RNA sequence: GGGAACGACUCGAGUAGAGUCGAAAACUAUCAUUGUCUGAUAGAUUUAAGACUAGUGGUGAUUUAGCUGUUCAGAUAGGUAGCAACAAUGUUUGCACUUAUGAACAUGUGAUCUCAUAUAUGGGUUUCAGGUUUGAUGUUAGUAUGCCUGGCAGUCGCAAAUUACAAAGUUCGCUUUGUAAUUUGCAAAAGAAACAACAACAACAAC
Reactivity to DMS in 0.01 (KOAc 150mM, MgCl2 10mM, bicine 150mM(pH8.5), 24C), signal-to-noise 2, nucleotides 027 to 156: c030u000a030u000c010a090u000u010g030u000c160u020g000a080u010a060g000a160u010u000u000a110a120g000a020c020u010a080g010u010g000g010u010g010a040u000u000u000a220g000c030u000g000u010u000c000a050g030a110u010a030g010g030u000a110g020c010a030a040c000a150a170u010g030u010u010u000g020c010a090c020u000u000a070u010g000a040a020c010a040u010g020u000g020a060u000c060u000c030a060u020a140u000a090u010g020g020g050u000u000u000c040a050g010g030u000u010u010g010a080u000g020u020u000a150g020u000a020u000g010c000c000u010g000g000c070a060g020u000c170
Reactivity to 2A3 in 0.01 (KOAc 150mM, MgCl2 10mM, bicine 150mM(pH8.5), 24C), signal-to-noise 6, nucleotides 027 to 156: c010u020a020u050c010a020u050u210g090u130c080u040g010a020u050a080g080a080u060u100u170a130a060g030a040c050u070a040g060u010g120g020u070g030a030u030u070u160a040g010c010u020g010u000u000c010a020g050a220u070a040g110g070u080a080g040c000a010a010c020a140a300u240g120u050u010u010g020c010a010c010u030u040a030u060g010a010a010c020a030u100g020u010g030a020u000c030u000c080a010u060a010u040a050u120g110g050g000u060u080u070c020a010g010g070u030u130u170g030a020u020g010u030u020a060g030u050a080u130g040c010c010u020g040g000c030a020g040u090c060

Structure probing data (DMS and 2A3) for a 207-nucleotide construct. For 2A3 the reverse transcriptase was SuperScript II with manganese. For 2A3, 3,438 sequencing reads were counted. The data come from the RNA Mapping Database (RMDB), library OK3TST. The reactions ran in a buffer of 150 mM KOAc, 10 mM MgCl2 and 150 mM bicine (pH 8.5), at 24 C.